Chemical mapping of a 207-nucleotide RNA with DMS and 2A3. The DMS profile rests on 2,287 reads. 2A3 is a SHAPE reagent: it acylates the 2'-hydroxyl of flexible nucleotides of all four kinds. Conditions: 150 mM KOAc, 10 mM MgCl2 and 150 mM bicine (pH 8.5), 24 C. Values cover nucleotides 27 to 156.
RNA sequence: GGGAACGACUCGAGUAGAGUCGAAAAGUUUUUUUCCAAAAUUAGAAUUGCCAAAAACUAAAACGUCGACAUCAUCGACAUCGGUUACACCAUCGACAUCGGCUGGACCGUCGACAUCGGCUGGACCGUCGACAUCGGCCGGACCAUCGACAUCGGCAGUCUAGAACUUAUUCGUAAGUUCUAGACUAAAAGAAACAACAACAACAAC
Reactivity to DMS in 0.01 (KOAc 150mM, MgCl2 10mM, bicine 150mM(pH8.5), 24C), signal-to-noise 2, nucleotides 027 to 156: g030u050u000u000u000u000u000u000c040c020a080a050a130a120u020u000a120g000a130a110u000u020g000c010c000a070a070a100a070a100c070u010a060a030a060a090c060g000u000c010g010a040c090a170u010c200a250u000c010g020a010c030a100u000c030g050g030u000u010a060c080a060c070c040a060u000c040g000a020c050a070u020c050g000g010c030u020g040g000a080c020c040g000u000c010g020a080c130a130u000c040g050g000c020u000g060g020a300c010c070g020u000c020g000a030c060a080u000c060g000g000c060c020g010g050a050c010c040a090u000c010g000a040c040a070u000c050g040g020c050
Reactivity to 2A3 in 0.01 (KOAc 150mM, MgCl2 10mM, bicine 150mM(pH8.5), 24C), signal-to-noise 4, nucleotides 027 to 156: g010u000u010u000u000u000u090u150c080c010a140a110a000a020u180u130a050g060a110a090u140u070g010c030c000a050a040a070a020a070c090u170a110a090a040a050c130g000u010c000g030a010c010a140u160c040a050u040c050g010a030c020a080u090c060g000g010u060u040a060c080a040c040c020a040u040c010g040a030c010a050u060c000g010g000c020u020g050g060a040c090c080g000u000c000g020a020c030a080u090c050g130g000c070u110g090g050a130c000c030g000u020c010g020a010c010a020u040c010g000g030c010c000g030g010a010c040c010a020u030c010g020a020c020a060u080c040g010g020c030